[RMDB]
RNA sequence: GGGAACGACUCGAGUAGAGUCGAAAAAAGCAACAUGCUAGUAAAUGACAAGAUUUGAAACUUAGGAGGAUUAGUGAGUUAAUGAGAUCCUUUGAAAGGUCAGGGUAAUACUACUACUAAUAGCUAACAAGGGUAACAUCUUCGGAUGUUACCCUUGAAAAGAAACAACAACAACAAC
Reactivity to DMS in 0.01 (KOAc 150mM, MgCl2 10mM, bicine 150mM(pH8.5), 24C), signal-to-noise 1, nucleotides 027 to 126: a070a010g000c020a050a100c140a090u000g010c150u000a020g020u000a060a070a130u000g000a100c110a100a070g000a110u010u010u000g010a050a070a070c040u010u000a300g010g010a020g000g000a030u000u000a170g000u000g000a070g000u000u020a080a080u000g010a140g000a030u010c000c000u000u000u000g000a020a070a080g010g020u010c050a030g000g000g010u000a020a030u010a080c070u000a040c070u000a050c070u000a060a040u000a080g030c040u010a050a140